[RMDB]
RNA sequence: GGGAACGACUCGAGUAGAGUCGAAAAAGGCGGUGCGUUCGCCUGGGUGUCGGUCAUCGGGCUACCCGCGGAUCGGUAUCCCGAGUUCCGGCAGGGCGAUUACGGCGACGAGUACACCCUCACUGUUCGUGGUCCCGACCGUCGAGACAACGCAGCGUCAGAUAGUGGAUUUCGAUCCACUAUCUGAAAAAGAAACAACAACAACAAC
Reactivity to DMS in 0.01 (KOAc 150mM, MgCl2 10mM, bicine 150mM(pH8.5), 24C), signal-to-noise 2, nucleotides 027 to 156: a100g010g030c000g000g020u010g010c060g020u000u000c040g020c000c000u020g020g040g030u050g040u000c010g030g010u000c080a070u000c020g000g000g050c040u000a030c010c020c030g020c150g000g000a090u000c060g000g010u000a060u000c020c000c000g000a040g030u010u000c010c000g040g010c000a060g040g020g030c010g000a180u010u000a070c010g000g010c010g020a070c040g000a120g020u010a110c070a080c020c010c000u000c040a090c060u000g010u000u010c030g010u020g010g020u000c000c000c000g010a120c050c090g040u010c060g020a070g000a030c030a040a080c020g040c040a250g000c050g010
Reactivity to 2A3 in 0.01 (KOAc 150mM, MgCl2 10mM, bicine 150mM(pH8.5), 24C), signal-to-noise 4, nucleotides 027 to 156: a000g060g000c030g020g060u050g030c010g010u000u010c000g000c000c000u020g000g050g110u020g010u020c010g000g000u030c080a190u000c110g020g000g000c000u010a010c000c040c030g140c180g170g070a150u230c050g000g000u000a000u010c000c000c010g000a010g020u260u130c010c000g000g000c010a010g010g010g000c010g030a030u040u140a050c070g040g010c020g010a020c000g010a010g040u050a050c030a100c030c030c030u080c010a070c070u120g110u190u090c060g040u030g050g030u080c020c010c000g020a090c040c010g040u030c020g000a010g030a030c080a100a030c050g020c020a010g040c000g050